Chemical mapping of a 177-nucleotide RNA with DMS and 2A3.
For 2A3, 2,183 sequencing reads were counted.
The data come from the RNA Mapping Database (RMDB), library OK1LIB.
Reactivities are given for positions 27 through 126.
For 2A3 the reverse transcriptase was SuperScript II with manganese.
RNA sequence: GGGAACGACUCGAGUAGAGUCGAAAAGCUGGCGGUUGUCGGCCAUGACGAGCUGCGGAAGGUCGUUGACGAGCGCGUCACACAGGUGACACACGACGCACUGCUGGCCACCAAGACCGCCUACAUCUCGUUCCAAAGACUUCGGUCUUUGGAACGAAAAAGAAACAACAACAACAAC
Reactivity to DMS in 0.01 (KOAc 150mM, MgCl2 10mM, bicine 150mM(pH8.5), 24C), signal-to-noise 2, nucleotides 027 to 126: g000c100u010g010g000c000g080g040u020u000g000u080c250g060g020c000c090a020u060g000a110c070g020a030g050c060u000g100c050g000g020a160a110g000g000u040c000g010u060u000g000a050c000g000a100g010c160g030c030g000u000c000a000c090a200c230a160g020g000u030g040a080c080a080c110a280c000g000a120c080g000c000a020c060u020g000c020u000g000g000c030c000a120c120c300a170a250g000a060c010c000g040c020c000u030a000c090a090u000c060
Reactivity to 2A3 in 0.01 (KOAc 150mM, MgCl2 10mM, bicine 150mM(pH8.5), 24C), signal-to-noise 3, nucleotides 027 to 126: g130c110u030g000g000c020g010g010u040u060g080u160c070g030g000c000c000a000u070g050a060c070g070a010g030c130u090g010c030g020g040a140a030g120g050u040c040g080u030u200g060a090c040g020a090g160c110g000c030g040u020c000a000c000a030c010a040g020g250u070g050a010c010a000c000a010c150g070a010c000g010c000a010c000u010g020c000u000g020g030c010c000a030c060c010a030a040g020a000c030c000g000c000c000u020a010c010a030u040c050